The record gives the reactivity of an RNA of 207 nucleotides to 2A3 and DMS. The reactions ran in a buffer of 150 mM KOAc, 10 mM MgCl2 and 150 mM bicine (pH 8.5), at 24 C. 2A3 adducts were read by reverse transcription with SuperScript II with manganese. For 2A3, 989 sequencing reads were counted.
[RMDB]
RNA sequence: GGGAACGACUCGAGUAGAGUCGAAAAAGAAUGAACCACAGCGUAAAAUCAUCUGAUUGGGUGAGUUGGUCGCACCGCCAUUUGACGAACGAACGCCAAGCCUAAGCCGUCUUUGUGCAUUAAGUGGAAAAGGAGCCCCAGUUCGCUGGGGCUCCAAGAGGUAUAUAAUCUUCGGAUUAUAUACCUCAAAAGAAACAACAACAACAAC
Reactivity to 2A3 in 0.01 (KOAc 150mM, MgCl2 10mM, bicine 150mM(pH8.5), 24C), signal-to-noise 2, nucleotides 027 to 156: a000g100a050a080u070g010a000a000c000c000a010c010a040g030c000g050u080a050a130a080a030u050c020a010u010c060u090g080a260u070u080g070g020g000u010g020a070g010u010u090g090g020u080c020g030c050a010c000c040g040c000c010a040u040u030u090g080a060c030g000a150a040c040g020a060a010c040g000c070c020a080a030g010c020c020u040a060a030g010c000c000g030u030c040u040u060u060g070u140g030c000a010u030u120a090a060g010u080g040g040a020a060a100a110g000g010a010g000c020c000c020c020a000g010u030u050c060g000c060u000g000g050g000g000c010u010c000c000a000a000
Reactivity to DMS in 0.01 (KOAc 150mM, MgCl2 10mM, bicine 150mM(pH8.5), 24C), signal-to-noise 1, nucleotides 027 to 156: a090g020a180a070u020g000a140a080c030c020a020c060a090g030c050g030u020a110a080a130a110u000c010a030u000c030u000g030a220u000u000g040g000g010u010g000a080g020u000u000g020g000u010c050g000c040a100c040c010g000c010c010a090u000u000u040g020a030c010g000a080a070c100g010a090a090c050g030c000c030a030a140g010c040c030u000a060a120g000c040c020g030u010c060u000u000u010g000u000g030c030a080u000u000a020a070g010u000g030g000a060a050a140a170g010g010a060g060c000c000c000c010a080g000u000u000c240g050c000u010g060g090g060g000c000u000c000c000a000a040